[RMDB]
About this RNA
Chemical mapping of a 177-nucleotide RNA with DMS and 2A3. Reactivities are rounded to 0.1 and cut off at 0 and 3. Conditions: 150 mM KOAc, 10 mM MgCl2 and 150 mM bicine (pH 8.5), 24 C. For DMS the reverse transcriptase was MarathonRT. Source: RMDB library OK2TRN, as collected in RNAgym. Reactivities are given for positions 27 through 126.
RNA sequence: GGGAACGACUCGAGUAGAGUCGAAAACAGCUUUGAAUAUGAGGGCCUUCUGAGGCGCAGUGCCAUAGCUUCCACCCCAGACAGGUGUGUUACCUUAGCAAAAAGUAAUGAAACAAUUCAGGGACCCCCAUGCAAUAAUGUUCGCAUUAUUGCAUGGAAAAGAAACAACAACAACAAC
Reactivity to DMS in 0.01 (KOAc 150mM, MgCl2 10mM, bicine 150mM(pH8.5), 24C), signal-to-noise 8, nucleotides 027 to 126: c150a120g010c050u010u000u000g010a090a090u000a090u000g000a100g000g000g000c020c030u000u010c090u000g010a090g000g010c090g010c120a060g010u000g010c060c060a070u000a090g010c040u000u000c040c040a120c040c010c000c030a080g000a090c180a040g000g020u000g010u000g010u000u000a050c030c040u000u000a090g010c160a040a050a070a070a070g010u000a040a050u000g000a090a080a100c060a060a100u000u010c040a040g000g020g000a150c020c030c040
Reactivity to 2A3 in 0.01 (KOAc 150mM, MgCl2 10mM, bicine 150mM(pH8.5), 24C), signal-to-noise 5, nucleotides 027 to 126: c030a020g040c010u100u080u110g050a070a040u140a130u250g040a120g010g080g020c010c000u070u040c070u120g080a070g040g000c040g000c070a020g030u030g050c050c030a070u060a080g010c000u050u000c020c020a040c020c000c000c000a010g030a090c040a030g020g020u030g000u010g020u090u070a060c010c000u020u070a030g050c060a020a080a090a050a010g070u100a060a090u060g070a060a040a060c030a040a060u080u070c010a020g070g010g020a120c010c000c000